[RMDB]
RNA sequence: GGGAACGACUCGAGUAGAGUCGAAAACGUCAAUUCGUUGACGCUAUUGUCCUAAGUCGCUGCGGGAGUCAUCCCAUCGAUCUCCAUCGGAAACGAUGGAGGGAGGAAGAUGACUUUGAUCGCAGCGAUAUGGAGAUGCUGGACGUUCGCGUCCAAAUUGUCUGUGAGAAUUCGUUCUCACAGACAAAAAAGAAACAACAACAACAAC
Reactivity to 2A3 in 0.01 (KOAc 150mM, MgCl2 10mM, bicine 150mM(pH8.5), 24C), signal-to-noise 4, nucleotides 027 to 156: c020g010u010c000a020a060u110u150c200g090u100u060g010a030c020g000c060u120a100u100u300g150u080c000c000u040a100a050g010u000c000g000c000u000g010c010g000g020g010a000g000u010c000a000u030c030c020c030a130u250c010g050a050u030c000u000c000c000a000u000c010g000g050a150a010a050c010g000a010u020g020g000a000g020g010g000a060g030g050a060a130g000a010u000g000a000c000u090u030u080g190a140u170c020g000c000a000g000c000g000a000u000a010u020g020g030a090g000a030u120g090c120u060g000g010a000c000g010u060u060c250g030c020g060u030c020c040a030a090a000
Reactivity to DMS in 0.01 (KOAc 150mM, MgCl2 10mM, bicine 150mM(pH8.5), 24C), signal-to-noise 2, nucleotides 027 to 156: c000g030u010c000a020a050u000u000c300g010u000u010g000a000c030g050c010u000a040u000u020g000u000c010c000u010a090a300g040u000c000g030c010u010g010c010g010g000g000a010g000u000c020a050u010c020c020c050a100u000c020g000a240u000c010u000c000c000a020u000c020g030g020a260a100a230c010g040a020u010g000g000a030g010g020g000a230g010g000a300a110g030a010u000g000a030c000u010u000u000g010a140u000c020g000c010a010g020c000g000a000u030a030u000g000g010a180g010a150u000g010c070u000g020g010a090c040g020u000u000c150g030c010g010u000c000c000a010a110a090